Structure probing data (2A3) for a 207-nucleotide construct.
Conditions: 150 mM KOAc, 10 mM MgCl2 and 150 mM bicine (pH 8.5), 24 C.
The data come from the RNA Mapping Database (RMDB), library M2RFPK.
For 2A3 the reverse transcriptase was SuperScript II with manganese.
[RMDB]
RNA sequence: GGGAACGACUCGAGUAGAGUCGAAAAGAACUUUUGUGACUUGCUGAAACGGGACUAAUCUCCUCACCGAGGCUAAGCAAGUAAAAUACGCCUCUCAUAUCCUUACCUGAGGGUGGUAAGGAAAUAACCUGCAACGCUUCCUUCGGGAAGCGUUGAACUGCUCUUUAUCGUUCGCGAUAAAGAGCAGAAAAGAAACAACAACAACAAC
Reactivity to 2A3 in 0.01 (KOAc 150mM, MgCl2 10mM, bicine 150mM(pH8.5), 24C), signal-to-noise 2, nucleotides 027 to 156: g050a020a050c020u080u150u170u160g110u060g110a070c000u000u010g000c000u040g010a070a110a090c050g000g000g000a000c020u110a090a080u070c060u000c000c030u090c010a080c040c150g020a050g010g000c040u060a010a030g000c000a020a020g100u190a020a050a020a030u120a050c060g000c000c010u000c000u040c000a060u020a060u170c000c010u000u000a000c000c000u080g030a090g060g110g000u030g010g010u010a000a000g000g040a010a010a010u030a000a010c010c060u070g010c000a000a000c010g000c010u000u000c000c000u030u090c180g010g000g000a000a000g000c000g000u000u000g000a000a000